[RMDB]
Annotation: The record gives the reactivity of an RNA of 207 nucleotides to 2A3 and DMS. The DMS profile rests on 2,750 reads. For 2A3, 705 sequencing reads were counted. The data come from the RNA Mapping Database (RMDB), library M2RFPK. Reactivities are given for positions 27 through 156.

RNA sequence: GGGAACGACUCGAGUAGAGUCGAAAAGCUCUGUAAUGGGAUGGGAUCCGAAGCCCCAUUGAGGGAUAAUACAGGCUCUCCCUUCCAACUCCUAUUCCAACACGUCCUCGUCGUACAGAGUGGUAACUAAGGUAUAGCUCCUUCGGGAGCUAUACAAUCAAAACGACAUGUUCGCAUGUCGUUUUGAAAAAGAAACAACAACAACAAC
Reactivity to 2A3 in 0.01 (KOAc 150mM, MgCl2 10mM, bicine 150mM(pH8.5), 24C), signal-to-noise 2, nucleotides 027 to 156: g010c000u000c010u030g020u030a120a150u070g080g040g020a030u040g000g000g020a020u070c000c050g070a090a040g020c000c000c040c040a150u090u150g020a220g020g010g000a030u080a110a040u090a150c090a020g080g000c000u000c000u000c020c020c090u030u020c040c000a030a030c050u030c050c030u010a100u170u040c070c020a070a050c060a040c150g090u090c020c010u090c060g110u030c000g030u010a020c000a000g050a050g010u030g080g060u090a050a030c050u010a030a150g040g020u000a000u010a030g000c000u000c000c000u000u010c100g110g010g000a000g000c000u010a000u000a020c000a000a010
Reactivity to DMS in 0.01 (KOAc 150mM, MgCl2 10mM, bicine 150mM(pH8.5), 24C), signal-to-noise 2, nucleotides 027 to 156: g010c020u000c010u000g010u000a090a130u010g000g000g000a050u010g010g020g020a060u000c070c020g040a130a130g020c030c000c000c000a300u000u000g010a110g020g000g020a100u000a050a120u010a120c070a080g000g000c040u000c100u000c030c010c000u000u000c020c030a080a070c070u000c000c000u000a070u000u000c030c010a060a120c040a070c060g000u000c020c050u000c040g010u000c020g040u000a070c030a030g000a050g000u000g000g040u000a050a140c070u010a100a080g000g010u000a000u000a000g040c000u000c000c010u000u000c300g020g000g000a010g040c010u000a000u000a000c000a060a120